[RMDB]
RNA sequence: GGGAACGACUCGAGUAGAGUCGAAAAGAUAAUGGCACGGGCACUGGAUUUGAUAGCGGCAAUCAUGCCCCCGUCAUAAACUAUGCAACUGGCGAUGUAAGUUUUGGCUAUGAGGGGGAAUAUGCUGUUAAAUUUGCACGGUUUGUAAAUGCUGGCAGGCUUAUAAUCACUUCGGUGAUUAUAAGCCAAAAGAAACAACAACAACAAC
Reactivity to 2A3 in 0.01 (KOAc 150mM, MgCl2 10mM, bicine 150mM(pH8.5), 24C), signal-to-noise 2, nucleotides 027 to 156: g070a000u170a060a090u040g030g000c010a010c100g010g030g000c030a010c110u120g050g000a040u040u050u130g120a120u130a040g020c030g010g000c030a060a150u080c020a060u120g030c000c000c000c000c000g050u030c000a010u120a060a020a000c050u070a050u300g020c000a050a100c050u080g140g030c070g060a100u030g010u040a010a100g000u000u000u010u090g040g000c020u030a090u150g050a180g000g030g000g020g050a000a030u150a020u040g000c020u000g000u010u020a000a090a100u060u010u060g010c020a030c090g010g030u020u030u040g000u020a000a040a040u060g020c010u050g040g000c020a030